[RMDB]
RNA sequence: GGGAACGACUCGAGUAGAGUCGAAAAUCUAAAUUAGCUGAUGGGAGCUACCGGACGCUUCUUGCAUGGUACUUUAUGUAUUUCAUGGUAGAUCUCUCUGUUCACAGCACCUAAUUUUCUAGUUAAAGGAGAAUUAAAAGUUCGCUUUUAAUUCUCCAAAAGAAACAACAACAACAAC
Reactivity to 2A3 in 0.01 (KOAc 150mM, MgCl2 10mM, bicine 150mM(pH8.5), 24C), signal-to-noise 5, nucleotides 027 to 126: u020c010u030a040a090a160u120u070a070g000c000u020g000a020u010g030g000g000a000g000c010u010a010c000c000g110g070a100c050g030c000u170u070c090u090u300g010c000a020u030g030g000u050a040c020u040u200u300a160u300g000u000a040u000u090u130c030a030u050g030g000u020a030g010a170u020c000u000c000u000c000u020g020u080u090c090a010c000a020g010c020a040c020c000u030a100a120u070u080u080u050c040u040a120g110u180u130a060a040a010
Reactivity to DMS in 0.01 (KOAc 150mM, MgCl2 10mM, bicine 150mM(pH8.5), 24C), signal-to-noise 3, nucleotides 027 to 126: u010c040u000a060a020a060u020u000a060g000c040u010g000a090u010g000g000g010a020g000c020u020a010c010c030g000g030a170c230g020c020u000u050c170u020u020g030c010a110u000g030g010u000a010c050u010u040u040a050u040g000u000a010u000u020u040c030a080u040g000g010u000a030g000a080u040c020u000c000u000c010u000g000u020u020c230a050c040a010g000c080a210c180c110u030a020a030u010u000u000u000c070u020a120g000u000u010a070a120a170
Chemical mapping of a 177-nucleotide RNA with 2A3 and DMS. High 2A3 reactivity points to a flexible backbone, as in loops and unpaired stretches. DMS (dimethyl sulfate) methylates the pairing face of unpaired adenines and cytosines. The data come from the RNA Mapping Database (RMDB), libraries RFM100 and RFMREP. Conditions: 150 mM KOAc, 10 mM MgCl2 and 150 mM bicine (pH 8.5), 24 C.